Structure probing data (2A3) for a 207-nucleotide construct.
For 2A3 the reverse transcriptase was SuperScript II with manganese.
For 2A3, 1,303 sequencing reads were counted.
The RNA was probed in 150 mM KOAc, 10 mM MgCl2 and 150 mM bicine (pH 8.5) at 24 C.
Values cover nucleotides 27 to 156.

RNA sequence: GGGAACGACUCGAGUAGAGUCGAAAAGCUUUUUUUUCGGAUUAGGCGUCGAGGCGAAAGUCACCCUCCUCGCAUCGCAAGUUCGUGCUUGCGACUUACACGUAGGGCGAGGGGUGGGCGAAAGUUGAAAACACGAUGUUGUUCGCAACAUCGUGAACAACAGCCUUUACUUCGGUAAAGGCUGUUGAAAAGAAACAACAACAACAAC
Reactivity to 2A3 in 0.01 (KOAc 150mM, MgCl2 10mM, bicine 150mM(pH8.5), 24C), signal-to-noise 3, nucleotides 027 to 156: g010c010u120u040u010u020u020u010u020u040c110g050g000a110u110u110a130g060g010c060g010u020c020g040a030g060g000c070g010a130a060a000g030u060c050a100c030c000c000u040c000c000u000c000g000c020a060u030c000g000c000a000a000g050u150u240c130g210u300g080c020u000u010g010c020g010a010c000u060u070a050c140a020c060g190u210a110g030g100g000c010g000a000g000g000g000g000u130g000g020g000c100g050a120a010a010g020u010u010g070a060a040a030a030c000a000c000g000a010u000g010u010u000g030u040u050c210g020c120a000a000c000a000u000c010g000u010g010a000a000